[RMDB]
RNA sequence: GGGAACGACUCGAGUAGAGUCGAAAAGACUGUGCGUCGAUGCAACUGCUCUAAUCAUUUUCGUACCAGUGUAUUCCUUCAAACCUCUUCUCUUGACUGUAGUGGUGGCCUGAAGGAGUUCAUUGGUAAAUAACAGCUGUUUCGACAGCUGUUAUUUAAAAGAAACAACAACAACAAC
Reactivity to DMS in 0.01 (KOAc 150mM, MgCl2 10mM, bicine 150mM(pH8.5), 24C), signal-to-noise 7, nucleotides 027 to 126: g010a060c020u000g010u010g010c050g020u020c110g010a090u030g010c030a130a300c050u000g000c040u000c030u000a100a090u030c050a100u000u010u010u000c040g000u000a030c000c000a010g030u000g010u000a010u000u000c000c000u000u000c010a000a050a150c000c000u000c010u010u010c020u000c030u000u000g020a220c130u000g010u020a010g010u000g000g020u000g000g010c160c090u010g000a010a010g000g000a010g000u000u000c000a000u000u000g010g010u000
Reactivity to 2A3 in 0.01 (KOAc 150mM, MgCl2 10mM, bicine 150mM(pH8.5), 24C), signal-to-noise 9, nucleotides 027 to 126: g050a020c040u050g020u080g080c030g070u110c050g060a040u150g020c030a130a130c030u030g040c020u000c020u080a100a150u070c070a130u030u070u080u100c060g040u060a010c010c000a000g000u000g000u000a020u000u000c000c000u000u000c010a040a060a090c010c010u020c010u080u020c020u020c020u090u200g200a300c300u100g160u240a020g000u010g030g000u020g030g030c000c050u030g000a000a000g000g000a000g000u010u010c000a000u000u010g000g000u000
This 177-nucleotide RNA was probed chemically with DMS and 2A3. Reactivities are given for positions 27 through 126. The reactions ran in a buffer of 150 mM KOAc, 10 mM MgCl2 and 150 mM bicine (pH 8.5), at 24 C.